[RMDB]
RNA sequence: GGGAACGACUCGAGUAGAGUCGAAAAGUCUCCUGGACGCUUCCGCCCGCUCGGGAUGGGCCUCAGUGCCGACGAGGAGUCCGCAGGUGGGAGGAUCAGCCACCGGAGAGGGACGCGAUGGUAAGAGAAACAACACCCUUCGGGGUGUUGAAAAGAAACAACAACAACAAC
Reactivity to 2A3 in 0.01 (KOAc 150mM, MgCl2 10mM, bicine 150mM(pH8.5), 24C), signal-to-noise 5, nucleotides 027 to 129: g040u010c020u000c080c000u040g030g020a040c060g000c100u070u000c010c010g040c010c000c040g040c040u070c060g040g000g030a050u030g050g050g060c030c020u080c050a080g060u090g150c010c020g040a110c040g010a010g010g020a030g030u030c000c010g020c070a010g020g040u020g050g020g000a040g040g000a050u070c060a010g050c000c020a060c010c010g000g000a020g000a010g010g000g000a010c020g030c030g050a020u070g030g030u110a050a010g040a000g020a020a050a000
Reactivity to DMS in 0.01 (KOAc 150mM, MgCl2 10mM, bicine 150mM(pH8.5), 24C), signal-to-noise 4, nucleotides 027 to 129: g030u060c060u000c070c050u010g010g000a000c170g030c080u020u020c030c050g020c040c030c000g030c070u070c000g030g050g020a000u020g020g030g080c040c020u020c100a100g040u060g030c090c060g000a090c050g010a030g040g000a130g010u020c040c050g000c150a080g020g030u020g000g000g000a060g000g050a000u040c180a050g070c040c120a110c060c050g040g000a070g020a060g020g030g000a050c130g020c080g040a080u030g000g000u060a010a060g010a090g040a000a100a170
Structure probing data (2A3 and DMS) for a 170-nucleotide construct. The RNA was probed in 150 mM KOAc, 10 mM MgCl2 and 150 mM bicine (pH 8.5) at 24 C. For 2A3, 8,729 sequencing reads were counted. In probing experiments dimethyl sulfate is read out at A N1 and C N3, which are open when not base-paired.